[RMDB]
RNA sequence: GGGAACGACUCGAGUAGAGUCGAAAAGCUUAAUAACCUGCGCUGAGCCCUUCUCCCCCAGUUUGCCUGUGUCCUAGGGAAUUGGAAGGUCAUCCUUCACAGGAUCGUGUGGAAGUCCUGCUCGGGGUCCAAACAUGGUAAUUCGUUACCAUGUUAAUGUUAAACAACUUUUCGAAGUUGUUUAACAAAAAGAAACAACAACAACAAC
Reactivity to DMS in 0.01 (KOAc 150mM, MgCl2 10mM, bicine 150mM(pH8.5), 24C), signal-to-noise 3, nucleotides 027 to 156: g000c040u000u010a120a110u000a050a120c030c010u000g030c030g020c070u000g000a090g010c030c010c040u000u000c040u000c020c030c010c020c010a090g020u010u000u000g020c030c030u000g020u000g020u000c090c030u000a130g020g020g010a080a110u000u000g040g020a060a040g020g010u000c080a130u000c020c010u000u010c090a050c070a040g000g010a040u000c060g040u010g060u000g020g020a130a090g000u000c010c010u000g010c030u010c050g010g020g000g010u000c020c060a070a050a020c000a010u000g000g010u000a010a070u000u010c280g020u000u010a010c000c000a010u000g010u000u000a030a100
Reactivity to 2A3 in 0.01 (KOAc 150mM, MgCl2 10mM, bicine 150mM(pH8.5), 24C), signal-to-noise 3, nucleotides 027 to 156: g010c020u110u110a100a000u100a200a190c030c030u090g030c050g000c060u050g030a050g020c020c000c030u090u080c110u070c000c020c010c000c010a010g000u020u080u110g150c010c000u050g010u020g030u080c020c020u030a040g000g060g000a030a070u040u040g030g000a000a030g020g020u050c020a090u090c020c000u040u040c020a020c010a050g050g000a040u070c030g030u070g010u030g090g040a050a030g020u020c000c000u010g000c000u020c010g040g000g000g000u000c040c040a010a010a010c000a010u000g020g000u030a020a020u050u020c040g010u020u010a010c010c000a000u000g000u000u010a000a010
Structure probing data (DMS and 2A3) for a 207-nucleotide construct. The DMS profile rests on 11,203 reads.